Structure probing data (DMS and 2A3) for a 207-nucleotide construct.
For DMS, 4,228 sequencing reads were counted.
The RNA was probed in 150 mM KOAc, 10 mM MgCl2 and 150 mM bicine (pH 8.5) at 24 C.
It was measured as part of the RMDB library M2RFPK.
For 2A3 the reverse transcriptase was SuperScript II with manganese.
RNA sequence: GGGAACGACUCGAGUAGAGUCGAAAACAUUACGAAUUCAGUCGCAAAUUGUAGAAUUAGCUACUCUACGAUUUAGUGAGCGUUAGUAACGUUGUAAUAUAAUAUAGUCUUAGGAAGGAUUAUAUUGGAGCCGCGGACAAGUUCGCUUGUCCGCGAACGUAUUGUUUGAGUUCGCUCAAACAAUACGAAAAGAAACAACAACAACAAC
Reactivity to DMS in 0.01 (KOAc 150mM, MgCl2 10mM, bicine 150mM(pH8.5), 24C), signal-to-noise 2, nucleotides 027 to 156: c020a070u000u010a000c010g010a050a070u000u000c050a090g010u000c010g050c010a070a020a030u010u000g020u000a010g000a060a040u000u010a240g000c170u000a120c060u000c010u000a010c050g010a020u000u000u000a080g040u000g000a040g010c140g010u000u000a040g020u000a020a020c030g010u000u000g000u000a050a110u010a150u010a070a030u000a020u000a010g010u000c020u000u010a110g020g020a300a180g010g000a030u000u000a020u050a010u000u000g010g020a190g020c130c040g000c000g040g030a010c000a030a030g030u010u000c300g030c000u000u000g000u010c020c000g050c000g000a000a010
Reactivity to 2A3 in 0.01 (KOAc 150mM, MgCl2 10mM, bicine 150mM(pH8.5), 24C), signal-to-noise 6, nucleotides 027 to 156: c020a030u090u160a020c040g080a090a130u170u150c050a080g090u040c010g000c010a000a000a000u000u010g000u000a000g010a020a020u070u030a060g010c020u060a030c010u000c000u000a000c000g010a010u000u010u100a080g000u020g040a060g060c030g030u050u100a050g020u060a100a030c050g000u000u030g020u030a080a080u090a090u020a140a010u000a000u000a010g010u000c020u060u060a060g120g040a090a040g010g000a040u020u000a000u000a000u020u030g050g040a070g050c070c020g000c000g000g000a000c000a000a000g010u050u140c170g030c120u000u000g000u000c010c000g010c000g000a000a000